[RMDB]
RNA sequence: GGGAACGACUCGAGUAGAGUCGAAAAGUCCCCAGUAUGACGUUAAACUGCUGACUCAUACAUACUGUCACCGGUUGCUCAACAGGCUGUGUGGGACAAUAGAAUAACAAGGCUGUCAAUUUGAGCUAAAACUCCUCGGGGUUCGCCCCGAGGAGAAGAACAUAUUGCGGUUCGCCGCAAUAUGUUCAAAAGAAACAACAACAACAAC
Reactivity to 2A3 in 0.01 (KOAc 150mM, MgCl2 10mM, bicine 150mM(pH8.5), 24C), signal-to-noise 2, nucleotides 027 to 156: g030u020c000c000c000c000a000g030u040a020u170g030a050c080g000u030u040a030a080a050c030u070g010c000u030g020a050c030u020c040a030u010a050c000a000u080a060c000u040g020u030c030a050c170c070g100g040u160u190g010c020u020c110a030a010c000a040g030g000c020u010g030u010g000u020g100g010g020a000c020a010a050u150a090g070a060a070u120a110a010c080a050a080g080g000c030u030g120u170c040a030a140u090u120u170g020a010g000c000u080a040a050a060a200c010u000c000c000u000c000g000g010g010g010u030u080c210g050c010c000c000c010g000a000g000g000a000g000a000a000
Chemical mapping of a 207-nucleotide RNA with 2A3. Values cover nucleotides 27 to 156. Source: RMDB library M2RFPK, as collected in RNAgym.